[RMDB]
The record gives the reactivity of an RNA of 177 nucleotides to 2A3 and DMS. The DMS profile rests on 1,349 reads. 2A3 adducts were read by reverse transcription with SuperScript II with manganese. The data come from the RNA Mapping Database (RMDB), library TTRDES. Conditions: 150 mM KOAc, 10 mM MgCl2 and 150 mM bicine (pH 8.5), 24 C.
RNA sequence: GGGAACGACUCGAGUAGAGUCGAAAAGAUAUGGAUUAUCAUCGAUCGAGAACUACCUCGACGUAUCGGAAACGAUACCAAGAGGCUCGGGAGAUAAUCCUAAGUCAAACGUCUGUUCGCAGACGAAGAUUCAUUCUGAGUUCGCUCAGAAUGAAUCAAAAGAAACAACAACAACAAC
Reactivity to 2A3 in 0.01 (KOAc 150mM, MgCl2 10mM, bicine 150mM(pH8.5), 24C), signal-to-noise 3, nucleotides 027 to 126: g060a020u120a030u200g000g010a020u030u020a000u030c240a100u230c070g200a160u070c020g030a030g020a110a120c180u290a170c230c010u000c010g030a060c030g050u000a000u000c000g000g040a050a060a020c020g000a000u010a000c000c020a090a130g010a000g030g000c000u000c000g020g010g020a050g000a000u000a010a000u000c000c010u000a110a040g090u030c050a220a080a110c040g010u000c010u030g080u100u120c300g050c140a000g000a000c000g020a040a040
Reactivity to DMS in 0.01 (KOAc 150mM, MgCl2 10mM, bicine 150mM(pH8.5), 24C), signal-to-noise 3, nucleotides 027 to 126: g080a010u000a300u000g000g000a000u000u000a000u000c010a190u000c130g000a170u010c050g000a010g000a100a050c140u010a300c010c000u000c010g010a300c300g000u000a000u000c000g010g060a180a110a300c010g000a010u000a000c000c000a040a300g000a010g000g050c030u000c010g010g000g010a080g000a000u010a000a000u000c000c000u000a020a160g000u000c070a050a180a180c050g000u000c000u000g010u000u000c250g020c050a020g030a000c000g000a100a080